[RMDB]
RNA sequence: GGGAACGACUCGAGUAGAGUCGAAAACUUCCAGCGUUCGCGCUGGAAGAAAGGCCGAGUAGUGUUGGGUCGCGAAAGGCCAUAAAUCAACAAUCACUCAGAAAAUCGGUAUCUUCGGAUACCGAAAGAAUGAAGAAGUGUUCGCACUUCUUCAUUCAAAAGAAACAACAACAACAAC
Reactivity to 2A3 in 0.01 (KOAc 150mM, MgCl2 10mM, bicine 150mM(pH8.5), 24C), signal-to-noise 3, nucleotides 027 to 126: c000u000u010c000c000a000g010c000g040u050u070c130g010c000g000c090u000g000g000a010a010g000a010a010a010g000g010c000c000g000a010g010u000a000g000u000g080u110u130g120g070g020u150c020g000c010g030a050a000a010g000g010c000c010a000u010a000a010a010u100c020a010a100c030a030a080u160c050a040c100u070c030a020g140a120a110a030a110u030c010g000g010u010a010u000c010u040u040c150g040g000a000u010a000c000c000g000a010a000a000
Reactivity to DMS in 0.01 (KOAc 150mM, MgCl2 10mM, bicine 150mM(pH8.5), 24C), signal-to-noise 4, nucleotides 027 to 126: c000u000u000c000c000a000g020c000g020u000u010c210g030c010g020c000u000g010g010a000a000g000a010a080a140g000g020c010c010g010a060g010u000a110g010u000g000u000u000g010g000g010u000c040g010c020g000a120a140a180g000g020c010c000a050u000a020a060a120u010c060a100a080c130a100a090u010c140a010c040u000c040a090g010a050a050a110a090u010c010g010g010u000a000u000c000u010u010c200g010g010a000u000a000c000c000g000a000a020a040
Structure probing data (2A3 and DMS) for a 177-nucleotide construct. The RNA was probed in 150 mM KOAc, 10 mM MgCl2 and 150 mM bicine (pH 8.5) at 24 C. Values cover nucleotides 27 to 126. For 2A3 the reverse transcriptase was SuperScript II with manganese. It was measured as part of the RMDB library M2PK50.